Structure probing data (DMS) for a 177-nucleotide construct.
Values are in units of 0.01, from 0 to 300, in steps of 10.

RNA sequence: GGGAACGACUCGAGUAGAGUCGAAAAGGCACUUCAAGCCGCGCUGCUGAUCGGUCUGUUAUUCGAAAGAAGAAGUCGCAUCCUAGCAGAAUCGGUUGCCGAUGAGACGCGAAGAGAGCUGACGCACCAGGGAGGGAGUUUUCGAACUCCCUCCCUGAAAAGAAACAACAACAACAAC
Reactivity to DMS in 0.01 (KOAc 150mM, MgCl2 10mM, bicine 150mM(pH8.5), 24C), signal-to-noise 1, nucleotides 027 to 126: g030g000c020a060c090u010u000c150a170a140g010c020c000g000c300g000c040u000g000c010u010g000a050u000c030g080g030u000c000u010g010u010u000a110u000u020c000g000a030a120a120g010a060a140g010a120a070g010u000c080g010c140a060u000c030c130u000a000g010c050a050g000a100a030u000c000g000g000u000u000g000c050c010g000a030u000g000a130g030a040c040g000c050g000a040a050g000a110g000a130g000c020u000g000a120c050g020c150a050c200